[RMDB]
RNA sequence: GGGAACGACUCGAGUAGAGUCGAAAAGUUUGCCUUGCUGGUGGUCGCCCAGUCGCUGCCCAGUGUGCUGAUCGCCGCGGCUGCCACGGGCUUUGCCGGCGCGCUGUUCAAUCCCGCGGUGCGCGGCUGAAUUGCUGUCUUUCGAGACAGCAAUUCAAAAAGAAACAACAACAACAAC
Reactivity to DMS in 0.01 (KOAc 150mM, MgCl2 10mM, bicine 150mM(pH8.5), 24C), signal-to-noise 3, nucleotides 027 to 126: g020u000u010u010g010c010c020u010u010g050c200u000g010g040u000g010g010u000c010g020c020c090c020a040g000u000c050g010c030u000g020c100c140c130a150g020u000g020u020g010c010u000g010a290u000c140g010c180c160g010c000g020g010c030u000g020c010c010a030c030g010g010g030c040u010u010u020g010c040c000g010g010c000g020c030g000c020u000g000u000u010c110a060a180u000c010c010c010g000c050g000g020u000g000c000g030c000g000g030c020
Reactivity to 2A3 in 0.01 (KOAc 150mM, MgCl2 10mM, bicine 150mM(pH8.5), 24C), signal-to-noise 1, nucleotides 027 to 126: g060u100u170u170g020c000c010u060u300g030c110u010g070g010u010g030g000u020c020g040c000c000c000a020g000u040c000g030c010u090g140c020c110c020a070g040u050g130u160g080c030u030g010a100u200c100g120c120c080g000c020g010g000c000u030g030c000c000a000c000g000g010g000c030u040u070u020g020c000c010g130g030c010g030c020g000c010u010g020u090u060c040a050a090u070c000c030c040g020c000g040g000u020g020c010g000c000g020g000c030